[RMDB]
RNA sequence: GGGAACGACUCGAGUAGAGUCGAAAAGUAAGCAAAGACGUAAUAACCGUCAUGGUUAGUAAAAUGAGCGCAUGCCGUAAGAAAUGCAAACGCGUUAUGAUUCAGAACACCUGGUGCGCUAUUAUAACACUAGCAUGCAGUUCGCUGCAUGCUAGUGAAAAGAAACAACAACAACAAC
Reactivity to DMS in 0.01 (KOAc 150mM, MgCl2 10mM, bicine 150mM(pH8.5), 24C), signal-to-noise 3, nucleotides 027 to 126: g010u000a050a120g000c070a060a100a110g000a080c120g010u000a050a020u000a040a010c180c020g000u010c120a060u010g000g000u000u000a070g000u000a090a040a040a030u010g010a050g000c020g020c010a050u000g010c040c120g000u000a120a070g020a060a120a060u020g000c030a020a100a080c290g020c040g010u000u000a070u010g000a060u000u000c140a050g000a120a080c110a040c050c000u000g020g020u010g010c110g030c020u000a020u010u000a040u000a070a180
Reactivity to 2A3 in 0.01 (KOAc 150mM, MgCl2 10mM, bicine 150mM(pH8.5), 24C), signal-to-noise 2, nucleotides 027 to 126: g060u070a000a050g050c090a160a010a000g050a050c040g010u010a060a040u020a070a030c040c010g020u040c060a040u150g000g000u040u030a030g000u050a010a000a020a060u050g020a010g010c010g000c020a010u030g020c020c050g010u030a050a080g150a120a120a050u140g000c040a080a090a060c090g010c010g010u000u010a100u070g050a020u050u000c020a000g040a100a000c020a000c000c010u050g020g000u010g000c060g000c040u010a030u050u050a070u050a060a000

Source information:
An RNA of 177 nucleotides, treated with DMS and 2A3 and read out base by base. Conditions: 150 mM KOAc, 10 mM MgCl2 and 150 mM bicine (pH 8.5), 24 C. For DMS, 2,087 sequencing reads were counted.